[RMDB]
RNA sequence: GGGAACGACUCGAGUAGAGUCGAAAAUCACGCCGGGCAUUCGCCCGGUCGAACCGUCCAACUCCGUGGAAGCCGUAAUGGCAGGAAGCGGACGAACGGCGGCAUAGGGAAACGUGAUUCAACCUGGGGCCCAUGAAAAGACGAGCAUGAUGUCCGUCCCAGGGUGUCUCUUCGGAGACACCCUGGGAAAAGAAACAACAACAACAAC
Reactivity to 2A3 in 0.01 (KOAc 150mM, MgCl2 10mM, bicine 150mM(pH8.5), 24C), signal-to-noise 1, nucleotides 027 to 156: u000c000a000c020g020c020c000g000g000g000c060a150u240u300c270g000c000c000c000g000g000u000c000g000a000a000c000c000g000u030c010c000a000a000c000u000c010c000g000u040g010g040a080a050g000c000c000g070u300a200a140u300g010g000c010a030g000g100a000a000g010c000g020g010a020c020g000a030a000c000g010g010c020g000g000c090a300u040a010g010g070g000a020a050a010c010g010u000g010a010u040u010c030a070a110c010c040u000g000g030g010g010c010c020c000a030u030g060a020a100a010a060g060a020c050g000a020g060c020a050u070g010a080u050g040u000c020c020g010u020
Annotation: Chemical mapping of a 207-nucleotide RNA with 2A3. For 2A3 the reverse transcriptase was SuperScript II with manganese. It was measured as part of the RMDB library PDB130.